[RMDB]
RNA sequence: GGGAACGACUCGAGUAGAGUCGAAAACAGCCUAGAAAGAGUCAGACCUCUGAGACCAAAGUCCCACCUUCUCUUUGCAGACCUUGCCACUCAAGACCAGAGAGUUGGGGCCUCCUGGUCAGCUGGGGAGGGGUGUUGGCCUGGCCAGCAUGGAGGGAUACCCUACGCUAUUCGUAGCGUAGGGUAUAAAAGAAACAACAACAACAAC
Reactivity to DMS in 0.01 (KOAc 150mM, MgCl2 10mM, bicine 150mM(pH8.5), 24C), signal-to-noise 1, nucleotides 027 to 156: c030a190g000c030c020u000a080g000a130a150a040g020a160g010u010c020a140g000a150c100c020u010c000u000g000a150g030a030c030c060a100a140a030g000u000c000c010c000a080c040c010u000u000c040u000c010u000u000u010g010c030a120g010a070c030c010u040u030g030c020c100a110c110u010c020a070a140g010a090c040c010a070g000a140g010a010g000u010u000g050g010g010g010c190c000u000c070c060u000g040g010u000c030a070g040c070u000g000g000g020g010a050g070g000g020g030u020g000u000u000g000g000c040c020u020g030g040c030c000a050g030c030a050u020g000g010a090g020g000g000
Reactivity to 2A3 in 0.01 (KOAc 150mM, MgCl2 10mM, bicine 150mM(pH8.5), 24C), signal-to-noise 2, nucleotides 027 to 156: c040a000g040c020c040u110a080g140a070a130a020g040a010g080u150c090a010g030a220c020c000u000c050u090g090a060g010a060c030c040a050a130a070g010u020c000c000c000a080c040c020u100u110c030u070c010u060u040u100g060c050a030g010a180c050c020u010u060g070c080c010a040c030u170c050a110a010g010a180c040c020a050g060a000g000a000g090u040u060g060g000g010g000c000c000u010c000c000u010g010g000u000c000a000g000c010u050g000g020g010g070a090g050g000g010g040u030g020u090u000g030g000c030c080u070g070g020c000c000a000g050c070a090u120g030g040a030g000g060g000